[RMDB]
RNA sequence: GGGAACGACUCGAGUAGAGUCGAAAAUUGGUCAGCGCGAAGCGCCGGUGUUACCGCAUAGCACAGUCUCUUACGUGCCGAGCGCCGCCAUCGUUUGCCGGAGUUCAGCCAUCCGCGACGUCGGCGGUCCGGUAUAUAUUUUCGAAUAUAUACCGGAAAAAGAAACAACAACAACAAC
Reactivity to 2A3 in 0.01 (KOAc 150mM, MgCl2 10mM, bicine 150mM(pH8.5), 24C), signal-to-noise 9, nucleotides 027 to 126: u110u090g040g010u050c030a020g010c020g020c040g060a060a030g030c010g000c040c010g020g010u040g010u010u050a070c080c070g020c150a080u100a030g010c010a010c010a050g040u000c020u000c000u090u140a090c030g020u020g010c010c010g040a060g090c040g010c010c000g010c000c000a030u040c020g020u020u070u270g100c130c040g010g000a030g020u140u190c060a040g040c030c010a090u000c010c000g010c010g010a010c010g010u040c140g000g010c000g000g010
Reactivity to DMS in 0.01 (KOAc 150mM, MgCl2 10mM, bicine 150mM(pH8.5), 24C), signal-to-noise 9, nucleotides 027 to 126: u010u010g010g010u000c030a070g010c030g020c030g010a100a080g020c170g010c110c030g010g010u000g010u000u000a050c090c170g000c090a300u000a060g010c020a030c030a080g010u000c060u000c050u010u000a090c080g010u000g010c010c020g000a070g010c090g010c010c010g000c010c010a150u000c020g000u000u000u010g060c150c050g020g000a040g000u000u010c130a070g010c110c070a170u000c010c010g020c010g000a020c020g010u000c090g000g010c010g010g010